[RMDB]
Chemical mapping of a 177-nucleotide RNA with DMS and 2A3. For 2A3 the reverse transcriptase was SuperScript II with manganese. It was measured as part of the RMDB library OK1LIB. Values cover nucleotides 27 to 126.

RNA sequence: GGGAACGACUCGAGUAGAGUCGAAAAAGGCUUUUGGUCGAAUGACGUUGAGCUAUCACAAAGACCGUUUGCUCUUGCUAGGCAUUCGAUUCUUUCACUUAAUUUUAAGUCAAAAUCAGAACUAGCAAUUAUGAGGCGUAUUCGUACGCCUCAUAAUAAAAGAAACAACAACAACAAC
Reactivity to DMS in 0.01 (KOAc 150mM, MgCl2 10mM, bicine 150mM(pH8.5), 24C), signal-to-noise 4, nucleotides 027 to 126: a070g000g010c020u000u000u000u030g010g020u000c000g030a160a150u060g000a040c100g020u020u010g000a030g020c110u030a130u000c100a140c200a070a130a090g010a080c150c060g000u000u010u000g010c170u000c060u000u000g010c000u020a020g010g000c180a160u030u020c080g010a000u000u000c100u010u010u010c280a050c000u010u000a010a100u010u020u000u010a010a020g010u000c210a030a010a030a020u010c040a150g010a060a130c000u000a010g010c000a020
Reactivity to 2A3 in 0.01 (KOAc 150mM, MgCl2 10mM, bicine 150mM(pH8.5), 24C), signal-to-noise 7, nucleotides 027 to 126: a000g060g010c050u090u060u100u110g090g000u030c030g090a130a130u200g050a030c160g110u060u140g030a020g030c040u080a040u150c010a010c110a180a130a030g070a090c020c030g030u030u080u020g000c010u010c010u050u030g000c010u010a000g030g000c070a080u040u020c020g010a010u030u030c050u060u110u050c090a020c020u040u090a100a190u300u170u060u120a010a020g010u080c040a020a010a030a070u050c040a030g040a050a050c010u000a010g000c000a010